[RMDB]
RNA sequence: GGGAACGACUCGAGUAGAGUCGAAAAAGCCGAUACGUCGGCAGUUACUUCACAGUCGUUCUUCACUGGCUAGCUUUAUGUGGCAGCACCUUAAAGCUGCCAGUUGAAGAGCUGUUGUGGGUAACAACAUAACAGCAGGUUUCGACCUGCUGUUAUGAAAAGAAACAACAACAACAAC
Reactivity to DMS in 0.01 (KOAc 150mM, MgCl2 10mM, bicine 150mM(pH8.5), 24C), signal-to-noise 5, nucleotides 027 to 126: a070g000c010c000g010a030u020a070c180g030u000c000g000g010c010a080g000u000u000a000c000u000u030c010a020c020a010g010u010c210g000u000u000c000u000u000c010a020c000u000g010g000c000u030a010g020c000u000u000u000a000u000g000u010g010g010c190a150g000c060a150c040c110u000u010a000a010a000g010c000u000g000c010c000a000g000u020u020g020a010a010g000a010g010c000u010g010u010u000g010u000g010g000g000u000a010a000c000a160a220
Reactivity to 2A3 in 0.01 (KOAc 150mM, MgCl2 10mM, bicine 150mM(pH8.5), 24C), signal-to-noise 9, nucleotides 027 to 126: a000g010c000c000g000a010u030a060c230g090u010c000g010g000c020a010g000u000u000a010c020u150u300c010a000c000a010g040u060c020g010u020u000c000u000u000c000a000c000u000g000g030c110u210a020g000c000u020u020u010a030u050g060u090g070g030c080a090g120c020a130c010c050u010u020a000a000a000g000c000u000g000c000c000a000g000u000u020g000a000a000g000a000g000c010u030g010u020u000g000u000g000g000g000u000a000a000c000a000a010
This 177-nucleotide RNA was probed chemically with DMS and 2A3. It was measured as part of the RMDB libraries RFM100 and RFMREP. 2A3 adducts were read by reverse transcription with SuperScript II with manganese. DMS adducts were read by reverse transcription with MarathonRT. High 2A3 reactivity points to a flexible backbone, as in loops and unpaired stretches.